An RNA of 177 nucleotides, treated with 2A3 and DMS and read out base by base. The RNA was probed in 150 mM KOAc, 10 mM MgCl2 and 150 mM bicine (pH 8.5) at 24 C. The data come from the RNA Mapping Database (RMDB), library TTRDEL.
[RMDB]
RNA sequence: GGGAACGACUCGAGUAGAGUCGAAAAGAUAUGGAGAACGACGACUUUGAUCCUACCCACCUUUCUCGGAAACGAGAAAGAGGGGGAGUCGCGUUCUCCUAAGUCAAAAGGGAAGUUCGCUUCCCAACCUUGGUUAUAAGUUCGCUUAUAACCAAGGAAAAGAAACAACAACAACAAC
Reactivity to 2A3 in 0.01 (KOAc 150mM, MgCl2 10mM, bicine 150mM(pH8.5), 24C), signal-to-noise 4, nucleotides 027 to 126: g020a010u040a020u110g000g000a010g000a010a000c000g300a030c010g010a020c150u180u140u300g120a130u200c030c060u090a170c030c000c000a080c020c010u000u010u000c000u000c000g010g020a040a050a030c010g000a000g050a000a010a000g040a070g010g000g000g020g040a020g000u000c000g000c000g000u000u000c000u010c000c000u000a000a000g020u000c020a020a030a070a080g030g010g010a030a010g020u090u200c220g110c140u010u000c000c000c000a010a040
Reactivity to DMS in 0.01 (KOAc 150mM, MgCl2 10mM, bicine 150mM(pH8.5), 24C), signal-to-noise 6, nucleotides 027 to 126: g000a030u000a300u010g000g000a010g000a010a010c010g000a140c000g010a020c010u000u000u000g010a140u010c110c120u010a220c010c000c000a070c040c000u000u000u000c000u010c000g000g000a060a040a130c000g010a010g000a000a000a000g000a110g010g000g010g000g000a020g020u000c000g020c010g010u000u000c000u000c000c000u000a010a050g000u000c030a060a060a110a110g000g000g010a020a020g010u010u020c250g010c010u000u000c000c010c000a020a040